[RMDB]
This 177-nucleotide RNA was probed chemically with DMS and 2A3.

RNA sequence: GGGAACGACUCGAGUAGAGUCGAAAAGGCUACGAAAGAGCUACGAAAGGACACCCCCUUUAUCAGGCUACCCUCGACCACUUGUUGCUCCGGUACCGCGAAUACCAGGGUGUCGUCCGGGACCUGGACAUCGCUAUUGUUUCGACAAUAGCGAUGUAAAAGAAACAACAACAACAAC
Reactivity to DMS in 0.01 (KOAc 150mM, MgCl2 10mM, bicine 150mM(pH8.5), 24C), signal-to-noise 4, nucleotides 027 to 126: g020g020c030u000a090c060g020a070a110a140g000a080g010c040u000a080c090g010a070a080a070g000g010a120c120a120c030c010c020c020c030u000u000u000a080u010c060a030g020g000c060u000a040c020c010c030u000c100g000a050c060c050a070c120u010u020g020u000u000g000c070u000c020c040g000g000u010a050c080c040g000c150g020a060a170u000a050c080c040a040g010g000g010u000g000u000c080g000u010c060c130g000g000g010a080c010c000u000g000g000
Reactivity to 2A3 in 0.01 (KOAc 150mM, MgCl2 10mM, bicine 150mM(pH8.5), 24C), signal-to-noise 2, nucleotides 027 to 126: g030g000c010u070a030c210g090a070a050a080g030a000g000c020u050a040c040g070a130a010a020g060g040a010c010a110c030c020c010c000c010u060u070u030a120u070c030a020g010g000c050u150a100c000c000c020u040c050g020a030c000c020a070c040u050u130g050u070u070g110c040u010c010c000g030g050u050a110c060c040g090c040g000a020a020u040a060c020c000a000g000g000g020u040g010u000c010g000u000c000c010g000g040g040a040c020c010u050g000g000
The RNA was probed in 150 mM KOAc, 10 mM MgCl2 and 150 mM bicine (pH 8.5) at 24 C.